Description
This 170-nucleotide RNA was probed chemically with DMS and 2A3. The DMS profile rests on 44,450 reads. For DMS the reverse transcriptase was MarathonRT. It was measured as part of the RMDB library 15KLIB. Values cover nucleotides 27 to 129.

RNA sequence: GGGAACGACUCGAGUAGAGUCGAAAAAGACCUCCGAUUCGAGAGCUCCUGGACUCCUCGGCUCUGGAGUCCUCCGACCCGUGAGGUCGAGGAUCCCCGCGCAGGGAGGCAGCCACCAGGAGAAAGCCACCCCUACACUUCGGUGUAGGGAAAAGAAACAACAACAACAAC
Reactivity to DMS in 0.01 (KOAc 150mM, MgCl2 10mM, bicine 150mM(pH8.5), 24C), signal-to-noise 8, nucleotides 027 to 129: a120g040a050c050c030u050c040c070g050a130u030u040c080g020a100g000a130g020c020u020c000c000u020g060g010a210c030u010c010c040u000c060g010g010c020u020c000u030g000g000a050g040u000c000c000u010c040c030g040a030c030c030c030g090u070g000a130g050g000u000c020g010a000g000g000a000u020c040c010c000c080g030c240g020c000a100g010g100g010a040g010g050c110a000g000c120c070a090c000c000a050g020g030a040g040a030a030a070g030c000c070a100c150
Reactivity to 2A3 in 0.01 (KOAc 150mM, MgCl2 10mM, bicine 150mM(pH8.5), 24C), signal-to-noise 9, nucleotides 027 to 129: a000g060a040c010c020u020c030c030g090a100u050u100c070g030a030g000a020g120c000u010c000c000u020g030g040a170c010u010c000c010u010c020g040g000c000u000c020u050g010g000a020g030u000c000c000u030c050c070g010a000c000c000c020g210u250g100a250g010g000u000c000g000a000g010g000a050u080c030c020c000c010g000c000g000c000a050g180g130g010a000g020g010c060a010g050c070c060a070c000c000a000g000g010a000g000a020a010a000g040c000c000a060c020